The record gives the reactivity of an RNA of 207 nucleotides to 2A3.

RNA sequence: GGGAACGACUCGAGUAGAGUCGAAAAUACGCACCUCGUUAGGUGAGGCGGCUACACGAACAUAGGCCACUGACCCCGAACGUCGAGAGACGCCCCGGGUCAGGACAGCUCUUCCCGGCUUAAGGGUAAAAUCACAACGUCUUCGGACGUUGUGAAAGUGUUGAGAUGGUUUCGACCAUCUCAACACAAAAGAAACAACAACAACAAC
Reactivity to 2A3 in 0.01 (KOAc 150mM, MgCl2 10mM, bicine 150mM(pH8.5), 24C), signal-to-noise 1, nucleotides 027 to 156: u170a000c060g020c010a010c000c020u100c110g120u140u300a120g070g140u160g070a040g030g010c080g020g010c050u080a100c110a020c130g160a270a010c020a210u120a050g030g000c070c050a010c070u000g000a020c010c000c010c010g080a080a040c000g000u000c000g000a080g000a000g000a110c000g060c000c000c060c020g000g010g000u000c000a000g060g050a050c030a020g000c010u050c080u020u020c000c000c030g020g020c040u030u130a040a050g040g030g040u060a050a050a000a090u020c000a000c000a010a000c000g000u000c000u060u070c150g170g000a000c000g000u000u000g000u000g000a000a020a000

The data come from the RNA Mapping Database (RMDB), library M2RFPK. The reactions ran in a buffer of 150 mM KOAc, 10 mM MgCl2 and 150 mM bicine (pH 8.5), at 24 C.